[RMDB]
RNA sequence: GGGAACGACUCGAGUAGAGUCGAAAAUGAUAUUCAGCGUAUCAAUCAUCUCUUUAUCCGUUUCAGCAAGCAGCUUUGGUGUAGACAUAUCAAUAUUUUGCACUUGCGCUAAACCAGUGACACCAGGUAAAACAUCGUAUACCCCUAACGCAUCACGGAUAGCAAUUAGCUUCGGCUAAUUGCUAUCAAAAGAAACAACAACAACAAC
Reactivity to DMS in 0.01 (KOAc 150mM, MgCl2 10mM, bicine 150mM(pH8.5), 24C), signal-to-noise 2, nucleotides 027 to 156: u010g000a080u000a080u000u000c080a180g070c100g040u010a040u000c030a100a200u000c120a060u000c050u030c040u000u000u010a120u000c090c000g000u000u000u010c040a290g030c000a070a090g000c000a090g000c040u010u010u020g020g020u000g030u000a060g010a100c070a080u000a160u010c050a040a110u010a100u000u000u000u010g030c040a040c020u000u000g010c080g000c000u000a030a000a070c010c060a090g030u000g010a120c050a070c020c060a050g010g000u000a030a040a050a070c060a070u000c050g000u010a180u000a090c020c020c000c010u020a070a090c060g030c030a120u000c050a060c080g020
Reactivity to 2A3 in 0.01 (KOAc 150mM, MgCl2 10mM, bicine 150mM(pH8.5), 24C), signal-to-noise 5, nucleotides 027 to 156: u060g000a010u040a040u080u170c100a050g030c030g060u030a020u050c020a050a070u060c020a060u030c030u010c000u130u140u110a110u010c070c010g020u020u040u060c050a030g000c020a090a030g000c040a020g010c080u090u090u120g000g010u030g010u040a050g040a090c060a080u130a030u120c060a120a050u050a150u160u090u060u100g030c020a010c040u040u070g000c030g000c070u060a070a010a100c030c020a020g000u000g070a020c010a030c040c020a010g000g040u050a040a040a020a050c020a050u080c030g020u050a030u060a080c000c020c000c000u030a040a020c030g010c070a010u090c030a010c060g070
Conditions: 150 mM KOAc, 10 mM MgCl2 and 150 mM bicine (pH 8.5), 24 C. An RNA of 207 nucleotides, treated with DMS and 2A3 and read out base by base.